[RMDB]
RNA sequence: GGGAACGACUCGAGUAGAGUCGAAAAGUGGAGCUCGCGCAGCGGUUAGUGUUCGACUCUCAGGGCAUCCAGCGAGCGCGCGACUUGGCCGCUGAGCACGCUGCGCUCGCUGCACAAGCGGUGGCGACGCACUUGGGCAAUUCGUUGCCCAAGUGCGAAAAGAAACAACAACAACAAC
Reactivity to DMS in 0.01 (KOAc 150mM, MgCl2 10mM, bicine 150mM(pH8.5), 24C), signal-to-noise 1, nucleotides 027 to 126: g020u010g040g000a130g040c020u000c060g050c080g020c040a070g030c040g010g000u000u000a060g020u010g010u000u000c050g000a070c020u000c050u010c030a170g020g000g000c110a080u000c130c040a040g000c030g000a030g010c010g030c040g030c020g000a120c080u020u020g000g000c020c040g000c080u030g000a080g030c080a100c020g010c010u010g000c000g000c010u000c000g010c000u000g010c050a030c140a080a080g020c100g010g000u000g000g020c060g010a190
Conditions: 150 mM KOAc, 10 mM MgCl2 and 150 mM bicine (pH 8.5), 24 C.
The record gives the reactivity of an RNA of 177 nucleotides to DMS.
The DMS profile rests on 1,190 reads.
DMS adducts were read by reverse transcription with MarathonRT.
It was measured as part of the RMDB library OK2TST.